The record gives the reactivity of an RNA of 177 nucleotides to DMS and 2A3.
RNA sequence: GGGAACGACUCGAGUAGAGUCGAAAAAGACUUAGGAUCUAGCGCCAUUGGCGUGGGGGUUCGACUCCCUUCAUCCGCACCAUUUUUAUUUAAUUUAAUAAACGAGCGGGAAUAGUUCAGUGGUAGACCAUGGAGUGACGUUCGCGUCACUCCAUGGAAAAGAAACAACAACAACAAC
Reactivity to DMS in 0.01 (KOAc 150mM, MgCl2 10mM, bicine 150mM(pH8.5), 24C), signal-to-noise 1, nucleotides 027 to 126: a090g000a180c010u000u000a030g040g000a090u000c000u000a300g000c130g000c080c000a140u080u020g000g020c000g070u040g060g000g000g010g040u000u020c180g000a030c140u010c000c000c000u000u020c100a260u040c010c020g030c000a180c140c090a150u000u000u000u000u000a000u000u000u000a070a030u070u000u020a000a000u000a010a000a030c300g000a060g000c000g000g030g060a010a180u000a140g000u010u000c070a080g000u000g000g010u040a050g110a170
Reactivity to 2A3 in 0.01 (KOAc 150mM, MgCl2 10mM, bicine 150mM(pH8.5), 24C), signal-to-noise 2, nucleotides 027 to 126: a060g060a010c110u130u280a080g000g030a040u090c040u020a000g030c000g030c040c010a300u040u250g000g020c090g000u010g000g070g000g070g050u040u160c070g080a040c000u000c000c040c000u000u040c090a080u030c000c000g000c100a130c080c060a070u030u000u000u150u140a000u010u010u030a100a220u020u060u100a130a000u010a030a000a030c030g030a060g050c000g070g000g000a000a150u050a110g030u060u120c100a000g020u010g010g000u000a000g030a120
It was measured as part of the RMDB library OK1LIB. Values cover nucleotides 27 to 126. 2A3 adducts were read by reverse transcription with SuperScript II with manganese. For 2A3, 562 sequencing reads were counted.